[RMDB]
RNA sequence: GGGAACGACUCGAGUAGAGUCGAAAAGAUUUACAAUAAAUUCAAUCGGUGGGAGUUUAGCUUACCACAUGAAGAGUGACGUGUCAUUCCAUCAUGUGUGUAGCCCUAUCUUGGAGGGCAAAGAUGGCUUCUUGAAUCGUUUCGACGAUUCAAGAAGAAAAGAAACAACAACAACAAC
Reactivity to 2A3 in 0.01 (KOAc 150mM, MgCl2 10mM, bicine 150mM(pH8.5), 24C), signal-to-noise 2, nucleotides 027 to 126: g000a070u080u130u130a080c080a090a100u190a130a100a050u120u200c060a010a070u040c040g070g000u080g020g060g010a080g050u020u110u180a010g010c000u040u120a040c000c000a000c010a000u010g000a000a020g040a000g030u000g000a010c160g120u110g060u060c000a020u040u000c030c010a110u030c000a000u040g000u030g050u010g000u010a000g000c020c000c010u050a080u040c030u010u010g030g060a030g050g000g000c000a030a000a030g080a050u100g060g010
Reactivity to DMS in 0.01 (KOAc 150mM, MgCl2 10mM, bicine 150mM(pH8.5), 24C), signal-to-noise 2, nucleotides 027 to 126: g010a060u000u000u000a080c150a110a160u000a070a070a050u000u010c080a080a120u000c060g000g020u000g000g020g000a090g010u010u010u000a060g020c010u010u010a030c030c000a000c000a020u000g010a090a150g000a020g020u010g010a030c050g030u000g030u000c000a020u000u000c010c090a120u000c000a000u000g010u000g000u010g020u000a040g010c030c060c030u010a060u000c090u000u000g010g010a080g010g000g000c040a030a050a100g010a090u000g000g010

Chemical mapping of a 177-nucleotide RNA with 2A3 and DMS. It was measured as part of the RMDB library OK2TST. Conditions: 150 mM KOAc, 10 mM MgCl2 and 150 mM bicine (pH 8.5), 24 C.